[RMDB]
RNA sequence: GGGAACGACUCGAGUAGAGUCGAAAAAAGCUGCGUGCCCAGCUGGAUUUCCCUGUCCUGCUGGGUCCACAUAUGUAGAGGGACAUGGGUCGCGACUGCCCACGGAAUGCACACAGUUAUGCAUCCAUGACAGAUCUAAAUUCGUUUAGAUCUGUCAAAAAGAAACAACAACAACAAC
Reactivity to 2A3 in 0.01 (KOAc 150mM, MgCl2 10mM, bicine 150mM(pH8.5), 24C), signal-to-noise 6, nucleotides 027 to 126: a000a000g060c040u050g020c020g050u060g020c030c000c000a000g000c010u020g020g000a010u050u030u060c010c000c010u030g010u000c000c000u000g000c000u000g010g000g010u010c000c000a050c000a050u290a050u230g120u160a050g040a130g070g020g020a010c020a070u110g040g000g010u060c030g020c020g110a060c040u070g010c000c010c010a020c040g030g060a140a040u060g010c020a010c010a010c010a080g030u110u070a040u100g010c010a020u030c030c010a030
Reactivity to DMS in 0.01 (KOAc 150mM, MgCl2 10mM, bicine 150mM(pH8.5), 24C), signal-to-noise 8, nucleotides 027 to 126: a080a050g020c040u000g010c060g020u000g010c000c010c000a010g010c000u000g000g010a040u000u000u000c040c040c030u000g000u000c000c000u000g000c000u000g010g000g010u010c040c010a030c090a090u010a080u010g010u000a090g010a130g000g000g010a080c080a100u010g000g010g010u000c060g010c050g010a090c070u000g000c020c010c020a080c150g000g000a070a050u010g010c010a020c060a080c090a100g020u000u010a080u000g010c070a040u000c020c030a200